[RMDB]
Chemical mapping of a 207-nucleotide RNA with 2A3.
RNA sequence: GGGAACGACUCGAGUAGAGUCGAAAAACAGAGACGUUCGCGUCUCUGUCUAUAAGCGUCUUGGCGCAGUGGAAGCGCGCAGGGCUCAUAACCCUGAUGUCCCUGGAUCGAAACCAGGAGACGCUACCAUAAUACCACAACGCUUCGGCGUUGUGAAGAAGUUCAACUGUUUCGACAGUUGAACUUCAAAAGAAACAACAACAACAAC
Reactivity to 2A3 in 0.01 (KOAc 150mM, MgCl2 10mM, bicine 150mM(pH8.5), 24C), signal-to-noise 2, nucleotides 027 to 156: a000c000a000g000a000g000a000c000g110u190u200c280g000c000g120u000c000u020c000u000g000u000c000u030a120u030a070a040g000c000g030u000c010u010u100g070g000c000g000c000a030g000u200g170g160a250a040g030c000g020c010g030c040a000g020g000g000c000u000c060a150u240a170a090c000c000c000u040g050a090u090g120u070c000c010c030u000g000g020a030u120c080g100a030a040a090c000c000a010g010g000a000g000a010c000g030c000u000a000c000c000a070u120a220a080u090a210c060c000a000c010a000a000c000g020c010u050u060c140g040g000c000g000u000u000g000u010g000a000a000
Conditions: 150 mM KOAc, 10 mM MgCl2 and 150 mM bicine (pH 8.5), 24 C. The data come from the RNA Mapping Database (RMDB), library ARCHII.